[RMDB]
RNA sequence: GGGAACGACUCGAGUAGAGUCGAAAAAAUGAUGAGAGCCAUCUUAAACUAUGCUCUUCGGUCUUCAAGCCUGUCAUACUGACUCGUCUUGAGCGAAAAUAAGUCUGUAACCCGCAAUGUGUGCGAAGUGAUUCUGUCACUUCGGUGACAGAAUCACAAAAGAAACAACAACAACAAC
Reactivity to 2A3 in 0.01 (KOAc 150mM, MgCl2 10mM, bicine 150mM(pH8.5), 24C), signal-to-noise 3, nucleotides 027 to 126: a000a000u210g000a000u030g000a000g000a010g100c060c030a040u020c030u160u070a080a080a050c020u080a030u160g050c000u010c000u040u010c030g040g030u020c030u140u090c070a040a060g010c060c060u040g010u020c000a030u070a200c100u120g030a040c010u000c000g040u030c010u000u030g010a030g030c000g020a010a030a000a070u100a110a000g090u000c020u010g020u020a030a030c050c040c000g000c000a110a140u080g020u060g020u030g170c070g050a150a060
Reactivity to DMS in 0.01 (KOAc 150mM, MgCl2 10mM, bicine 150mM(pH8.5), 24C), signal-to-noise 2, nucleotides 027 to 126: a040a020u020g010a000u010g000a130g010a030g000c080c030a190u020c100u000u010a130a150a130c240u000a030u030g000c000u000c000u000u000c060g000g000u000c040u010u000c080a040a100g060c030c000u000g000u000c000a100u090a270c170u030g000a030c040u000c110g010u000c010u020u000g000a000g000c110g000a030a020a030a140u050a090a080g050u000c030u000g000u020a080a060c010c050c000g050c140a030a010u090g010u000g000u000g020c020g000a020a050

This 177-nucleotide RNA was probed chemically with 2A3 and DMS.
2A3 adducts were read by reverse transcription with SuperScript II with manganese.
Reactivities are given for positions 27 through 126.
The RNA was probed in 150 mM KOAc, 10 mM MgCl2 and 150 mM bicine (pH 8.5) at 24 C.
Source: RMDB libraries RFM100 and RFMREP, as collected in RNAgym.